[RMDB]
RNA sequence: GGGAACGACUCGAGUAGAGUCGAAAACUGGUACUCGGCGGCCUGGCGGAAGCUGCGCUUGUUGGCUUCCUUGUAGACCUUGGCGCAACGCAGGCUGUCGCCGCAACGCACCACAUAGACCGAGGCAUCGAUAGGCUCGUUUCGACGAGCCUAUCGAAAAAGAAACAACAACAACAAC
Reactivity to DMS in 0.01 (KOAc 150mM, MgCl2 10mM, bicine 150mM(pH8.5), 24C), signal-to-noise 2, nucleotides 027 to 126: c070u010g000g010u000a090c060u000c020g010g020c020g000g020c020c050u000g010g000c180g010g000a070a090g020c040u000g000c000g020c290u000u030g000u010u010g050g000c040u000u000c080c060u020u010g000u000a050g010a080c010c040u000u000g010g000c010g040c050a080a090c160g000c060a040g020g020c030u000g030u000c070g000c050c070g010c090a020a130c140g000c040a060c010c010a070c200a100u010a100g000a200c020c010g000a070g020g030c080a110